[RMDB]
RNA sequence: GGGAACGACUCGAGUAGAGUCGAAAACAAACGGCGCACCGCUACGGCAACGCCACUCUGCUGGCAUCCGAUAUGGUUUUUGGCAUCGGUAACCGCUUCGCCAACCGUCAUACGGGGUCCGUUGAGAGGAGUCACCGACCUUCGGGUCGGUGACUCCAAAAGAAACAACAACAACAAC
Reactivity to 2A3 in 0.01 (KOAc 150mM, MgCl2 10mM, bicine 150mM(pH8.5), 24C), signal-to-noise 1, nucleotides 027 to 126: c040a000a070a000c130g010g000c030g000c080a130c100c100g110c050u130a130c220g060g040c040a050a000c010g000c000c000a040c000u090c000u030g010c000u010g000g000c000a170u150c020c020g010a070u010a040u060g070g000u080u000u000u120u180g000g020c120a020u010c010g000g080u250a160a150c190c000g000c100u100u020c040g020c000c000a050a000c060c000g000u000c000a000u080a100c000g000g000g000g000u000c000c000g000u000u070g000a100g040a040

This 177-nucleotide RNA was probed chemically with 2A3. The reactions ran in a buffer of 150 mM KOAc, 10 mM MgCl2 and 150 mM bicine (pH 8.5), at 24 C. It was measured as part of the RMDB library OK1LIB. Reactivities are given for positions 27 through 126.